The record gives the reactivity of an RNA of 207 nucleotides to 2A3 and DMS. Reactivities are rounded to 0.1 and cut off at 0 and 3. For 2A3 the reverse transcriptase was SuperScript II with manganese. Values cover nucleotides 27 to 156. The RNA was probed in 150 mM KOAc, 10 mM MgCl2 and 150 mM bicine (pH 8.5) at 24 C. The data come from the RNA Mapping Database (RMDB), library OK3TST. DMS adducts were read by reverse transcription with MarathonRT.

RNA sequence: GGGAACGACUCGAGUAGAGUCGAAAAAAUAGAGAACCUUGCAGAGCAAAGAGGCUGCUCAGCAUCAUCACCACCAUGUCUGGGGCUACAGAGGAACUGAGAAAUGUCCUGUUUCCCAGGCAACCAUGCACCCUGGCCUCUUGGUUUGGGCAGGGAAAAAAUGGCCAUUAUUCGUAAUGGCCAUUUUAAAAGAAACAACAACAACAAC
Reactivity to 2A3 in 0.01 (KOAc 150mM, MgCl2 10mM, bicine 150mM(pH8.5), 24C), signal-to-noise 2, nucleotides 027 to 156: a000a000u220a040g080a030g020a070a050c040c000u060u060g000c020a040g010a010g030c000a010a030a070g050a030g020g030c050u030g040c040u040c060a020g010c000a020u040c000a000u080c020a040c160c000a070c070c030a100u030g010u000c010u010g020g010g030g050c100u020a000c010a010g080a040g050g130a180a010c030u040g010a020g080a090a160a060u260g020u010c010c010u010g000u000u050u000c000c000c000a000g000g000c000a000a030c020c000a020u080g020c020a050c040c030c030u050g170g010c030c000u080c010u030u040g050g020u010u010u030g020g050g010c000a000g000g000g000a090a070
Reactivity to DMS in 0.01 (KOAc 150mM, MgCl2 10mM, bicine 150mM(pH8.5), 24C), signal-to-noise 2, nucleotides 027 to 156: a080a120u020a090g010a240g000a090a100c010c020u000u020g030c050a300g010a070g030c030a060a050a090g040a040g000g030c040u000g010c030u000c040a140g040c030a040u000c040a080u000c040a090c060c030a030c060c030a200u000g000u000c020u020g000g010g020g000c040u010a040c040a040g020a060g030g040a090a170c030u000g000a190g010a040a030a110u010g010u000c030c030u010g050u000u000u000c000c020c000a030g020g000c010a030a030c060c030a060u000g000c020a090c040c020c040u000g030g000c000c010u000c080u000u000g010g040u010u000u000g000g030g030c010a060g010g010g030a000a010